Chemical mapping of a 207-nucleotide RNA with 2A3 and DMS. DMS adducts were read by reverse transcription with MarathonRT. The data come from the RNA Mapping Database (RMDB), library OK3TST. The RNA was probed in 150 mM KOAc, 10 mM MgCl2 and 150 mM bicine (pH 8.5) at 24 C.
RNA sequence: GGGAACGACUCGAGUAGAGUCGAAAAGACAUCAAUCAAUCUGCAGGAAACAAAAAAUGGAAGUCGAGGUUUAGGAAGAGUUGUCACUUCCCCGACUUGAGUGGUGCAGGCUGGGGGCGGAGACUUGGGACCUAAGAGAGGCCAUUUCUCUCACCUACGUAUAUAGUAGUUUCGACUACUAUAUACGAAAAGAAACAACAACAACAAC
Reactivity to 2A3 in 0.01 (KOAc 150mM, MgCl2 10mM, bicine 150mM(pH8.5), 24C), signal-to-noise 6, nucleotides 027 to 156: g040a010c040a070u120c050a070a100u050c010a010a070u030c050u050g020c030a030g050g110a080a070a040c120a080a150a060a050a000a020u130g050g000a040a000g020u030c020g030a090g080g040u130u180u230a050g030g020a010a030g030a030g030u050u060g070u070c020a030c060u010u030c000c010c000c020g030a030c030u040u050g030a020g070u080g030g010u040g020c020a010g050g000c020u060g010g000g020g010g000c060g010g020a030g000a020c000u020u010g030g020g030a050c000c020u120a180a010g050a010g010a010g040g020c010c000a020u040u070u020c020u000c020u000c020a050c000c020u040a040
Reactivity to DMS in 0.01 (KOAc 150mM, MgCl2 10mM, bicine 150mM(pH8.5), 24C), signal-to-noise 3, nucleotides 027 to 156: g020a130c070a070u010c040a110a070u000c030a060a110u000c050u000g020c050a100g010g010a090a090a250c090a010a020a060a080a050a120u010g010g000a050a030g020u000c010g000a030g020g010u000u000u000a070g020g010a040a110g010a090g000u000u000g030u000c040a110c060u000u000c010c000c000c030g010a030c040u010u010g010a090g020u010g020g030u020g020c040a060g000g030c030u010g000g000g010g020g030c130g010g020a110g020a060c050u000u020g020g030g010a080c030c060u000a030a140g010a170g010a060g030g030c040c050a110u000u010u010c000u020c000u000c040a090c050c010u010a120